[RMDB]
RNA sequence: GGGAACGACUCGAGUAGAGUCGAAAAGAUUCCUCGUUGUUGAGCGAGGUUUAAACACAUCGACCACACAAACGUAGAGCCGACUACGGAUUUAUAAAUUAAGGCAUUAAGUGUGAUAAGGAGACAAAAAACGAUGUUGUGUUCGCACAACAUCGAACCAUGCCAAUCAGUUCGCUGAUUGGCAUGGAAAAGAAACAACAACAACAAC
Reactivity to DMS in 0.01 (KOAc 150mM, MgCl2 10mM, bicine 150mM(pH8.5), 24C), signal-to-noise 2, nucleotides 027 to 156: g000a300u000u010c000c000u000c030g000u000u020g000u010u000g000a100g000c030g000a010g010g010u010u000u020a050a040a110c100a080c100a110u020c050g050a070c010c000a060c030a060c050a110a100a100c000g000u000a010g000a170g000c080c000g020a090c020u000a020c030g020g000a160u010u000u010a060u010a050a030a100u000u000a060a110g000g020c020a300u000u010a000a170g020u000g000u000g040a050u020a030a140g000g000a180g000a100c080a010a040a010a050a120a070c040g000a030u010g000u000u020g010u000g010u000u030c300g000c000a020c000a000a010c000a030u000c010g010a030a050
Reactivity to 2A3 in 0.01 (KOAc 150mM, MgCl2 10mM, bicine 150mM(pH8.5), 24C), signal-to-noise 2, nucleotides 027 to 156: g090a130u120u110c000c000u020c010g010u010u070g020u010u030g010a030g020c010g000a000g000g040u000u080u070a010a030a030c040a000c000a030u040c000g040a030c000c000a000c000a000c010a020a090a030c010g000u000a000g000a000g010c000c000g030a030c020u000a000c010g010g000a010u030u300u030a140u140a070a020a000u160u110a000a000g000g000c010a030u100u190a140a120g000u010g000u000g040a020u040a090a040g130g060a080g010a140c170a040a110a000a000a010a000c010g000a000u000g010u000u010g000u010g020u020u060c100g050c080a000c010a000a000c000a010u000c000g000a000a020